Overview:
This 177-nucleotide RNA was probed chemically with DMS.
RNA sequence: GGGAACGACUCGAGUAGAGUCGAAAAAACUGACAUGUCGAGAUUGUCAGAGUCUUGGCCUUUGCCAAGUUGAGAUGGCCGGUGCACUGGGGAUUUCUAAGAGAAAAUUUUCCAAAGACAUGAAGAAUAGUAAUCGACUUUUCGAAGUCGAUUACUAAAAAGAAACAACAACAACAAC
Reactivity to DMS in 0.01 (KOAc 150mM, MgCl2 10mM, bicine 150mM(pH8.5), 24C), signal-to-noise 1, nucleotides 027 to 126: a100a080c010u000g000a050c000a020u010g000u030c160g000a160g000a030u000u000g000u000c000a020g000a150g040u000c020u010u010g000g000c030c170u040u000u010g010c040c020a010a050g010u020u000g020a150g010a080u000g000g020c040c040g030g040u000g010c070a070c070u000g040g000g010g020a050u010u000u020c060u010a060a160g020a120g000a010a050a130a050u000u000u000u000c000c020a070a050a080g020a080c120a020u000g000a070a130g000a060a130
The RNA was probed in 150 mM KOAc, 10 mM MgCl2 and 150 mM bicine (pH 8.5) at 24 C. It was measured as part of the RMDB library OK2TST.